[RMDB]
RNA sequence: GGGAACGACUCGAGUAGAGUCGAAAAGAUAUGGAGACAAUGCUUUCGAGCGUAAUCGGAAACGAUUAUACGCUGGCAUGGUCUCCUAAGUCAAAAGAGAGGAGCUACCUUCGGGUAGCUCCUCUCACCUAAAUAUCCCGUUCGCGGGAUAUUUAGGAAAAGAAACAACAACAACAAC
Reactivity to DMS in 0.01 (KOAc 150mM, MgCl2 10mM, bicine 150mM(pH8.5), 24C), signal-to-noise 2, nucleotides 027 to 126: g000a030u000a290u010g010g000a030g000a010c010a060a000u000g000c000u000u010u010c290g010a040g030c010g010u000a020a030u000c010g020g010a100a060a160c010g010a010u000u000a080u010a060c040g010c020u000g010g010c000a010u020g000g020u000c000u000c000c000u010a000a070g000u010c020a080a060a160a150g010a020g000a030g000g010a030g010c000u000a000c000c010u010u020c300g020g020g030u000a000g010c000u000c000c010u000c000u000c000a000

Structure probing data (DMS) for a 177-nucleotide construct. For DMS the reverse transcriptase was MarathonRT. For DMS, 2,693 sequencing reads were counted.